[RMDB]
Structure probing data (2A3 and DMS) for a 207-nucleotide construct. The RNA was probed in 150 mM KOAc, 10 mM MgCl2 and 150 mM bicine (pH 8.5) at 24 C. For DMS, 3,096 sequencing reads were counted. Source: RMDB library OK3TST, as collected in RNAgym.
RNA sequence: GGGAACGACUCGAGUAGAGUCGAAAAAGACACUCAGUUUAGGUGGCUGCUGAGAGCAGAGAUUGUUAAGGCAAGAGUUGGGAGUGGGCACUGCACUGCAGAGGACAUUUAAUUGUUCUUUUUAGAUCUGGAUGAUCAAAUAAGGAAAGAUAAUGCACUGAGGUCAUUUAUUCGUAAAUGACCUCAGAAAAGAAACAACAACAACAAC
Reactivity to 2A3 in 0.01 (KOAc 150mM, MgCl2 10mM, bicine 150mM(pH8.5), 24C), signal-to-noise 3, nucleotides 027 to 156: a010g060a020c020a000c010u080c030a070g050u010u040u130a040g010g020u020g010g020c030u030g000c000u030g030a040g030a030g100c040a000g020a020g000a050u060u100g060u080u120a070a040g020g000c030a040a000g030a010g070u120u060g010g000g050a030g020u030g020g020g000c020a010c080u060g000c030a010c080u090g010c010a020g020a020g080g000a010c010a020u050u100u130a110a180u080u090g000u000u030c000u030u060u030u050u100a030g010a010u000c030u030g130g000a040u110g020a020u090c040a030a070a070u110a090a010g050g060a040a060a040g060a030u190a140a080u260g040c110a040
Reactivity to DMS in 0.01 (KOAc 150mM, MgCl2 10mM, bicine 150mM(pH8.5), 24C), signal-to-noise 2, nucleotides 027 to 156: a100g030a110c050a130c030u000c020a090g030u000u000u000a030g020g040u000g020g030c060u020g010c040u000g020a120g020a120g030c020a120g010a140g000a100u000u000g020u000u000a080a100g000g030c020a110a110g000a150g010u010u000g010g000g030a130g040u000g000g000g000c030a100c040u000g000c020a110c070u020g020c030a110g030a140g040g000a070c030a030u000u000u000a100a120u020u000g020u000u000c010u000u000u000u010u010a120g010a060u000c010u010g040g000a150u000g010a070u000c020a010a090a100u000a070a080g020g010a080a060a060g020a080u000a050a080u000g020c050a240